Chemical mapping of a 177-nucleotide RNA with 2A3 and DMS. In probing experiments dimethyl sulfate is read out at A N1 and C N3, which are open when not base-paired. Conditions: 150 mM KOAc, 10 mM MgCl2 and 150 mM bicine (pH 8.5), 24 C. Source: RMDB libraries RFM100 and RFMREP, as collected in RNAgym. For 2A3 the reverse transcriptase was SuperScript II with manganese.

[RMDB]
RNA sequence: GGGAACGACUCGAGUAGAGUCGAAAAAGCACUGAAACCACGAGGAGGAGGUGUGGUGUCUGUCUGAGCAUGAAGCUGGUUAUUGGUGUUGCUUCUGCAGCUGCCAUUAGCCAUUGAUGAUCGCUCUUCACGUUAGCGAAUUCGUUCGCUAACGUGAAAAAGAAACAACAACAACAAC
Reactivity to 2A3 in 0.01 (KOAc 150mM, MgCl2 10mM, bicine 150mM(pH8.5), 24C), signal-to-noise 3, nucleotides 027 to 126: a000g050c030a030c080u090g000a150a020a010c020c000a060c070g030a110g050g040a050g000g050a070g010g030u060g020u060g050g030u020g010u000c040u020g090u020c040u050g010a010g020c010a050u060g050a020a010g010c030u010g010g000u010u010a010u040u000g020g000u010g080u300u080g020c020u130u200c110u300g000c000a000g010c020u140g000c000c000a010u000u000a000g000c000c000a030u020u120g030a040u080g020a020u100c020g000c000u000c000u010
Reactivity to DMS in 0.01 (KOAc 150mM, MgCl2 10mM, bicine 150mM(pH8.5), 24C), signal-to-noise 2, nucleotides 027 to 126: a120g000c020a070c060u000g020a150a210a040c000c020a080c130g010a090g000g040a070g000g020a070g020g000u030g000u000g000g000u000g020u020c070u000g040u000c120u010g000a040g000c010a070u000g000a190a060g000c110u000g000g040u000u000a010u000u000g000g020u000g010u010u000g000c000u010u020c220u090g010c020a030g000c000u040g050c000c000a010u030u040a010g000c000c010a040u000u030g020a040u010g000a090u020c040g000c010u000c010u030